Structure probing data (2A3 and DMS) for a 177-nucleotide construct. For 2A3, 17,091 sequencing reads were counted. Values cover nucleotides 27 to 126. The RNA was probed in 150 mM KOAc, 10 mM MgCl2 and 150 mM bicine (pH 8.5) at 24 C. The data come from the RNA Mapping Database (RMDB), library OK1LIB. 2A3 adducts were read by reverse transcription with SuperScript II with manganese.
RNA sequence: GGGAACGACUCGAGUAGAGUCGAAAACGGGGUACGAUGGAUAGUAAUAAUACACCCGAUAUACAGUCCCGUACCCAUAGACUACGUGGGAGAUUUUCGGGUGUAUUAUUCUCUCAUACGUGGUCAAGGUACUCGGUGAUUUCGAUCAUCGAGUACCAAAAGAAACAACAACAACAAC
Reactivity to 2A3 in 0.01 (KOAc 150mM, MgCl2 10mM, bicine 150mM(pH8.5), 24C), signal-to-noise 6, nucleotides 027 to 126: c050g000g000g000g010u010a000c010g020a120u110g010g010a000u020a050g100u110a050a080u040a060a000u010a040c000a010c000c000c000g000a010u070a010u030a130c050a010g030u010c000c000c000g000u010a010c000c000c000a010u060a020g010a000c000u000a000c000g000u020g000g000g000a010g010a020u020u020u050u110c010g000g000g000u000g000u000a000u000u000a010u030u020c010u000c000u000c000a010u010a050c000g000u000g000g020u000c010a000a020
Reactivity to DMS in 0.01 (KOAc 150mM, MgCl2 10mM, bicine 150mM(pH8.5), 24C), signal-to-noise 3, nucleotides 027 to 126: c060g020g010g000g010u000a000c010g020a120u030g010g010a030u010a120g010u020a080a060u000a030a030u000a010c000a000c000c000c000g010a150u030a070u020a060c130a250g000u000c000c000c000g000u000a020c000c000c020a100u030a100g010a030c030u000a000c010g010u000g000g000g000a010g000a090u030u000u020u020c040g000g000g000u010g000u000a000u010u000a040u020u010c020u000c010u000c000a050u040a030c020g010u000g000g010u000c010a110a110